Conditions: 150 mM KOAc, 10 mM MgCl2 and 150 mM bicine (pH 8.5), 24 C. The record gives the reactivity of an RNA of 177 nucleotides to 2A3 and DMS. For DMS, 1,136 sequencing reads were counted.
[RMDB]
RNA sequence: GGGAACGACUCGAGUAGAGUCGAAAACACGAACCGCGGCCACCGCGGUCAGCGGAGCGCGUAUCCAGCUGUUCGCCGCCCUCGUUCACGACGGUAACCGGUCGUACUGGGAUGAGGACUAUGCGCGGCGUACCUACGCUUUCGAGCGUAGGUACGCAAAAGAAACAACAACAACAAC
Reactivity to 2A3 in 0.01 (KOAc 150mM, MgCl2 10mM, bicine 150mM(pH8.5), 24C), signal-to-noise 2, nucleotides 027 to 126: c050a000c040g040a060a020c020c000g010c030g010g000c090c160a270c150c110g040c060g070g010u000c000a060g000c000g000g020a040g000c070g010c000g030u000a060u050c050c010a000g000c020u020g030u080u050c040g040c040c000g030c000c000c030u000c000g030u030u040c030a040c030g010a000c000g010g040u140a160a200c090c040g070g020u010c010g010u020a090c060u150g000g000g050a010u020g000a010g020g010a030c020u160a110u190g040c030g000c020g040
Reactivity to DMS in 0.01 (KOAc 150mM, MgCl2 10mM, bicine 150mM(pH8.5), 24C), signal-to-noise 1, nucleotides 027 to 126: c000a140c030g020a130a020c000c000g000c040g000g030c070c140a290c150c010g040c170g030g040u000c010a000g120c030g020g010a070g000c000g060c040g000u000a050u000c000c000a140g000c070u000g050u000u000c020g000c040c020g000c050c050c010u000c000g000u000u020c000a050c000g000a120c080g040g010u050a060a180c120c090g000g020u000c000g030u000a130c190u000g000g030g000a100u070g010a000g010g000a140c120u000a210u030g000c030g020c150g030